[RMDB]
Structure probing data (DMS and 2A3) for a 177-nucleotide construct. For 2A3, 2,631 sequencing reads were counted. The RNA was probed in 150 mM KOAc, 10 mM MgCl2 and 150 mM bicine (pH 8.5) at 24 C. For 2A3 the reverse transcriptase was SuperScript II with manganese. High DMS reactivity at an A or C suggests that its Watson-Crick edge is free.
RNA sequence: GGGAACGACUCGAGUAGAGUCGAAAAGGUAAUGAGUUCGCUCAUUACCAAAGAAAGGGUGCUAGUCUGAGCGCACAGACUAGCACGGCGCAAAGAAAGAAAAAAGAACCUGGUUCGCCAGGUUCAAUCAAUUAGUCUCGUUCGCGAGACUAAUUGAAAAAGAAACAACAACAACAAC
Reactivity to DMS in 0.01 (KOAc 150mM, MgCl2 10mM, bicine 150mM(pH8.5), 24C), signal-to-noise 3, nucleotides 027 to 126: g000g020u000a010a000u000g010a010g010u000u000c210g030c010u000c000a010u010u000a010c000c000a040a090a090g010a080a070a090g010g010g020u000g010c000u000a000g000u000c000u000g000a100g000c160g010c160a120c000a000g000a010c010u000a000g010c000a000c020g010g030c040g010c100a050a090a090g000a040a100a130g010a010a050a050a120a090a080g010a000a010c000c000u000g000g010u000u010c260g010c020c000a000g010g020u000u000c000a020a070
Reactivity to 2A3 in 0.01 (KOAc 150mM, MgCl2 10mM, bicine 150mM(pH8.5), 24C), signal-to-noise 2, nucleotides 027 to 126: g000g000u000a010a000u020g010a010g030u040u110c160g050c110u000c000a000u030u000a020c000c000a010a010a000g080a030a050a000g190g040g000u000g010c010u010a000g000u000c000u010g040a050g130c090g010c080a030c010a150g000a000c000u000a000g000c000a010c000g050g080c060g000c050a060a110a040g110a080a130a000g110a000a110a060a050a020a020g000a000a000c000c010u000g010g030u010u030c100g000c050c000a000g000g000u020u000c000a000a000